[RMDB]
RNA sequence: GGGAACGACUCGAGUAGAGUCGAAAAUCCAGAGUGGAUGAGGACACUGUGAUGUAGCAUUCCUAGCUCAGUCGGUAGAGCGCACGGCUCUUAACCGUGUGGUCGUGGGUUCGAUCCCCACGGAGUGGGCCGUGAGGUAGUUCGCUACCUCACGGCCAAAAGAAACAACAACAACAAC
Reactivity to 2A3 in 0.01 (KOAc 150mM, MgCl2 10mM, bicine 150mM(pH8.5), 24C), signal-to-noise 4, nucleotides 027 to 126: u010c000c000a000g020a010g020u120g060g060a150u130g060a080g030g020a010c020a010c060u060g050u060g100a220u150g040u080a010g000c010a030u130u100c010c010u000a010g010c020u020c040a040g160u110c100g080g100u120a040g010a000g060c050g000c010a010c000g030g010c010u000c000u150u190a050a060c000c000g020u020g020u070g110g060u090c030g000u030g040g010g000u020u020c040g020a090u100c010c000c000c000a000c000g000g000a080g060u200g000
Reactivity to DMS in 0.01 (KOAc 150mM, MgCl2 10mM, bicine 150mM(pH8.5), 24C), signal-to-noise 3, nucleotides 027 to 126: u000c000c020a150g000a110g000u020g000g060a030u000g000a130g030g030a080c060a100c050u000g010u060g020a070u010g010u000a090g020c100a130u000u070c010c030u030a110g000c000u000c030a080g000u010c050g000g000u040a040g000a000g000c040g000c040a010c040g000g000c000u060c130u030u040a070a230c000c030g040u000g030u000g060g010u060c010g000u000g010g030g000u010u010c170g010a270u020c050c000c010c020a020c020g010g000a100g020u050g010